Structure probing data (2A3 and DMS) for a 177-nucleotide construct.
For 2A3, 7,823 sequencing reads were counted.
Conditions: 150 mM KOAc, 10 mM MgCl2 and 150 mM bicine (pH 8.5), 24 C.
Values cover nucleotides 27 to 126.
RNA sequence: GGGAACGACUCGAGUAGAGUCGAAAAGAUAUGGAGUCACGCCGCACUGACAACAGCUGGGAUCGGAAACGAUCCCAGACAUGUCAAACGGUGACUCCUAAGUCAAAAGAUAGUGUUCGCACUAUCACCUUCUUCAUACGUUCGCGUAUGAAGAAGGAAAAGAAACAACAACAACAAC
Reactivity to 2A3 in 0.01 (KOAc 150mM, MgCl2 10mM, bicine 150mM(pH8.5), 24C), signal-to-noise 3, nucleotides 027 to 126: g050a030u060a030u180g020g000a030g020u020c010a020c210g220c180c050g050c110a140c190u080g020a020c040a230a020c050a230g050c000u010g000g000g000a010u010c000g000g010a030a060a040c000g000a000u000c000c000c010a000g000a020c000a050u080g000u030c000a030a030a110c030g020g040u020g010a000c000u000c000c000u000a090a020g050u000c040a040a000a090a170g020a010u000a000g020u010g070u080u120c300g000c110a000c020u000a000u030c000a080
Reactivity to DMS in 0.01 (KOAc 150mM, MgCl2 10mM, bicine 150mM(pH8.5), 24C), signal-to-noise 3, nucleotides 027 to 126: g010a070u010a300u000g010g000a050g000u000c040a050c050g000c100c070g020c140a130c220u000g000a010c010a090a120c300a210g020c020u000g000g000g020a010u000c010g000g000a100a080a160c000g010a010u000c000c000c010a000g000a010c090a120u010g000u000c010a060a110a180c030g000g020u000g010a010c000u000c000c000u010a010a120g010u000c030a120a070a090a160g000a030u010a020g010u000g010u000u000c260g000c010a020c000u000a000u000c000a250